RNA sequence: GGGAACGACUCGAGUAGAGUCGAAAAUAAAUACAUAAUUGCCACGCAUAAGAAGAAUGGGAAGAAUGUCUUUUCAAAGUCCGGAUAUAGGCUGUUAGAUAGGAAGACCAUGAUGAACAUAUUAAACAUAGAACCUCUUUUUCGAAAGAGGUUCUAUAAAAGAAACAACAACAACAAC
Reactivity to DMS in 0.01 (KOAc 150mM, MgCl2 10mM, bicine 150mM(pH8.5), 24C), signal-to-noise 4, nucleotides 027 to 126: u030a040a050a040u040a090c040a040u020a080a110u030u010g000c050c010a060c130g030c160a120u030a110a060g020a120a040g000a090a040u000g000g000g010a060a040g000a260a090u010g000u000c020u010u010u020u020c060a080a090a050g010u010c010c050g020g010a090u020a090u020a020g000g000c010u010g000u010u010a020g000a030u010a000g010g000a100a070g000a040c040c010a030u000g010a090u000g020a060a070c130a110u020a070u020u020a050a070a120c160
Reactivity to 2A3 in 0.01 (KOAc 150mM, MgCl2 10mM, bicine 150mM(pH8.5), 24C), signal-to-noise 2, nucleotides 027 to 126: u170a010a070a060u100a040c000a030u180a100a100u130u070g020c050c000a000c030g040c070a140u120a240a040g050a120a000g000a120a040u130g010g010g000a000a080g000a030a070u050g090u100c050u000u080u000u000c090a090a000a000g030u080c000c000g090g020a050u170a050u000a200g060g000c000u010g000u060u000a000g000a090u090a030g110g080a030a000g020a030c000c000a000u070g000a050u100g090a070a000c010a020u100a070u200u300a040a040a000c020